[RMDB]
RNA sequence: GGGAACGACUCGAGUAGAGUCGAAAACUGUUUAUCCAUUCGCUGAGUACGCUGCUCUGACCUUCUUCCCAGUCUCGGUUCCUGUUCUGGGAGCUUGGGGCUGAGUAGCCACCAGCCCUGCUCUCUGCAGUCAGUUUAACUUCGGUUAAACUGACUGAAAAGAAACAACAACAACAAC
Reactivity to DMS in 0.01 (KOAc 150mM, MgCl2 10mM, bicine 150mM(pH8.5), 24C), signal-to-noise 2, nucleotides 027 to 126: c050u010g020u000u000u010a070u000c010c040a140u000u010c070g010c050u000g010a140g000u020a070c180g000c020u000g010c020u000c020u020g020a100c050c040u000u000c090u010u000c010c000c000a050g000u010c020u010c070g030g010u000u000c000c010u000g000u000u000c050u000g030g000g020a020g000c170u000u020g010g010g000g010c010u000g000a040g020u000a080g000c120c070a120c100c010a040g000c010c020c030u000g000c040u000c010u000c040u010g000
Reactivity to 2A3 in 0.01 (KOAc 150mM, MgCl2 10mM, bicine 150mM(pH8.5), 24C), signal-to-noise 2, nucleotides 027 to 126: c040u040g110u130u140u110a130u050c030c010a060u100u150c040g010c020u040g030a000g140u070a070c050g000c020u050g040c020u020c000u040g190a290c020c030u050u040c000u060u040c040c040c000a010g030u000c000u000c080g110g020u030u030c000c010u090g050u240u110c020u060g000g020g020a010g000c010u050u270g040g000g020g000c000u010g010a030g000u010a020g040c040c000a010c000c000a000g000c000c000c020u030g050c010u040c000u000c020u070g020
Chemical mapping of a 177-nucleotide RNA with DMS and 2A3.
For DMS the reverse transcriptase was MarathonRT.
It was measured as part of the RMDB library RFMREP.
Values cover nucleotides 27 to 126.
For 2A3, 1,535 sequencing reads were counted.
The RNA was probed in 150 mM KOAc, 10 mM MgCl2 and 150 mM bicine (pH 8.5) at 24 C.
The DMS profile rests on 1,857 reads.